[RMDB]
RNA sequence: GGGAACGACUCGAGUAGAGUCGAAAAGAAAUCUCUGUCAAAAGCCGGAAAAUAAUAAGAGGUAGAGAGAGCAGAGUGGAAAUAAAUAACAGGUCUGCUUCCUGUUAGAAGACGGCGAAUUAGAAAAGGGAAUUACUAACUUCGGUUAGUAAUUCCCAAAAGAAACAACAACAACAAC
Reactivity to 2A3 in 0.01 (KOAc 150mM, MgCl2 10mM, bicine 150mM(pH8.5), 24C), signal-to-noise 1, nucleotides 027 to 126: g040a100a100a000u000c020u000c000u080g100u150c150a110a000a000a000g000c000c000g100g300a130a090a000a000u300a090a000u110a270a020g020a010g050g000u150a090g000a000g000a000g000a060g020c000a050g030a000g040u000g000g050a050a000a190u210a030a120a010u090a120a000c000a030g000g240u040c050u030g000c020u100u020c000c000u000g040u150u060a110g000a040a000g150a000c000g000g030c050g000a070a200u090u080a080g100a190a020a050a110
Reactivity to DMS in 0.01 (KOAc 150mM, MgCl2 10mM, bicine 150mM(pH8.5), 24C), signal-to-noise 1, nucleotides 027 to 126: g000a070a180a110u000c000u000c000u000g030u000c010a060a010a150a170g030c000c000g000g020a050a000a100a100u000a060a200u050a160a140g010a050g000g000u020a010g010a100g010a030g040a010g040c050a060g010a040g000u030g000g010a140a040a120u040a030a060a090u090a140a090c020a040g030g010u040c010u030g000c000u040u030c000c010u000g000u010u040a050g000a120a030g000a200c030g050g000c000g000a110a190u000u070a180g000a020a070a150a060
The data come from the RNA Mapping Database (RMDB), library OK1LIB. An RNA of 177 nucleotides, treated with 2A3 and DMS and read out base by base. The RNA was probed in 150 mM KOAc, 10 mM MgCl2 and 150 mM bicine (pH 8.5) at 24 C. For DMS, 1,090 sequencing reads were counted. For DMS the reverse transcriptase was MarathonRT.